[RMDB]
Source: RMDB library OK1LIB, as collected in RNAgym. Chemical mapping of a 177-nucleotide RNA with DMS and 2A3. The DMS profile rests on 11,577 reads. For DMS the reverse transcriptase was MarathonRT.
RNA sequence: GGGAACGACUCGAGUAGAGUCGAAAACCGUCGCCUUCACUGCGACGGCGUAUUCAAAGAUGGUCAUGCAUGCGGCUAAGCACACGCAAGACGCAGUGAACGGCGUGCUCCUCGGUCGACUGCUUCCGAGGAGCACGCGAUUCGUCGCGUGCUCCUCAAAAGAAACAACAACAACAAC
Reactivity to DMS in 0.01 (KOAc 150mM, MgCl2 10mM, bicine 150mM(pH8.5), 24C), signal-to-noise 5, nucleotides 027 to 126: c010c040g010u030c000g010c040c040u010u010c080a080c080u000g010c000g010a080c080g010g000c050g000u020a090u030u030c150a090a100a080g000a130u020g030g000u000c060a120u020g010c040a050u020g000c050g010g030c040u010a070a180g000c070a070c130a050c050g010c010a050a050g020a090c030g020c030a000g010u010g020a030a060c160g010g000c020g010u000g010c000u000c000c000u000c010g020g000u010c030g000a150c100u020g000c070u000u000c020c020
Reactivity to 2A3 in 0.01 (KOAc 150mM, MgCl2 10mM, bicine 150mM(pH8.5), 24C), signal-to-noise 9, nucleotides 027 to 126: c020c010g050u040c010g000c000c020u060u070c020a020c030u020g000c010g040a050c030g040g000c010g020u060a170u060u200c120a110a100a040g130a150u160g050g040u080c040a050u150g140c060a070u150g090c110g070g000c080u100a140a060g060c050a060c020a010c110g010c060a110a100g050a060c020g000c020a010g000u000g020a050a040c120g020g000c000g000u020g010c000u030c000c000u010c010g000g040u010c030g050a120c070u100g040c070u140u020c030c040